[RMDB]
RNA sequence: GGGAACGACUCGAGUAGAGUCGAAAAUAAGUUAAACCCUUCAGAAGAUUUUAUAAAGCACGUCCGCACUAAUGGUGGUUACAAUUCUUGGCAUUUAGUCGAGGGUGAACUAUUGGUGCAAGACUUAUACCAAGGGGGUUCGCCCCCUUGAAAAGAAACAACAACAACAAC
Reactivity to 2A3 in 0.01 (KOAc 150mM, MgCl2 10mM, bicine 150mM(pH8.5), 24C), signal-to-noise 4, nucleotides 027 to 129: u020a000a000g010u010u150a010a010a010c000c010c000u070u120c040a060g030a090a000g000a040u010u050u030u020a170u070a020a010a020g060c020a010c030g000u000c030c060g000c000a020c040u000a000a010u000g040g000u000g020g120u100u080a030c110a060a010u030u000c020u000u030g000g000c020a060u130u130u250a050g000u000c000g000a000g000g020g020u010g000a010a000c000u000a020u010u000g040g000u000g010c000a030a010g020a010c010u050u040a080u040a060c040
Reactivity to DMS in 0.01 (KOAc 150mM, MgCl2 10mM, bicine 150mM(pH8.5), 24C), signal-to-noise 4, nucleotides 027 to 129: u020a040a090g030u050u040a010a000a000c000c020c050u050u040c140a080g010a090a100g040a050u000u000u000u000a000u050a050a070a090g000c000a070c150g010u020c030c110g050c040a040c030u040a050a000u000g000g010u020g020g080u000u050a040c220a050a010u000u000c030u030u010g000g030c020a160u020u020u040a110g000u000c000g030a000g040g020g040u010g020a050a010c000u010a030u030u010g010g010u000g100c060a110a100g010a000c050u000u000a070u010a110c170